[RMDB]
RNA sequence: GGGAACGACUCGAGUAGAGUCGAAAAUUCAUUUUGCGCAUCUCCUUAUCCGUGAUCGGCAGCACCUCGCCAGUCGGCUCCUCUCUGCCACGCCGAUCCGUCAGAUUGUAGUCGACCGACAGAACCAGAUAUUAUUACGCUUCGGCGUAAUAAUAUCAAAAGAAACAACAACAACAAC
Reactivity to DMS in 0.01 (KOAc 150mM, MgCl2 10mM, bicine 150mM(pH8.5), 24C), signal-to-noise 5, nucleotides 027 to 126: u030u030c080a050u010u000u000u020g000c030g000c040a060u040c050u010c030c040u010u000a100u030c050c040g000u000g010a050u010c030g020g020c050a130g020c060a080c050c020u010c060g020c020c020a120g010u020c090g000g010c030u000c030c020u000c030u010c030u000g000c070c060a100c070g010c020c020g030a070u000c050c040g010u010c060a040g000a060u010u010g000u000a060g000u000c030g020a100c020c060g010a070c080a090g010a090a090c130c110a130
Reactivity to 2A3 in 0.01 (KOAc 150mM, MgCl2 10mM, bicine 150mM(pH8.5), 24C), signal-to-noise 9, nucleotides 027 to 126: u070u040c020a030u030u080u120u160g040c050g010c010a040u020c010u040c020c010u080u130a090u070c030c030g050u090g050a090u060c020g030g010c020a030g020c020a040c020c010u050c030g040c010c010a020g050u050c020g030g000c010u010c000c000u020c000u010c020u030g040c030c010a060c040g040c030c030g050a060u030c010c010g000u000c000a030g020a090u050u090g040u060a030g020u010c020g020a060c020c020g030a030c030a060g060a040a040c030c010a020